This 177-nucleotide RNA was probed chemically with DMS. Values are in units of 0.01, from 0 to 300, in steps of 10. The RNA was probed in 150 mM KOAc, 10 mM MgCl2 and 150 mM bicine (pH 8.5) at 24 C. DMS adducts were read by reverse transcription with MarathonRT. For DMS, 1,528 sequencing reads were counted.

RNA sequence: GGGAACGACUCGAGUAGAGUCGAAAAGAAAAGAUGAUCUACCCGAAGUCAUCGACGCGAUUGUCGCAGUGAACUUGUUGAAGGUAUGUCGGUCUCUCAGAAAUCAUUCCGAGACCGUGAAACAAAAGGGUAUUCUUUACUUCGGUAAAGAAUACCCAAAAGAAACAACAACAACAAC
Reactivity to DMS in 0.01 (KOAc 150mM, MgCl2 10mM, bicine 150mM(pH8.5), 24C), signal-to-noise 2, nucleotides 027 to 126: g020a090a110a090a170g010a010u020g020a000u000c040u000a110c000c030c000g000a130a110g000u000c020a070u090c060g000a080c230g010c100g060a300u020u060g010u040c010g080c030a100g060u010g030a090a040c150u000u000g000u000u000g010a000a050g020g040u020a030u030g010u010c000g000g000u000c000u000c000u000c300a000g030a030a030a110u080c180a020u000u000c010c110g000a020g000a010c000c000g000u000g010a110a110a090c150a000a090a070a050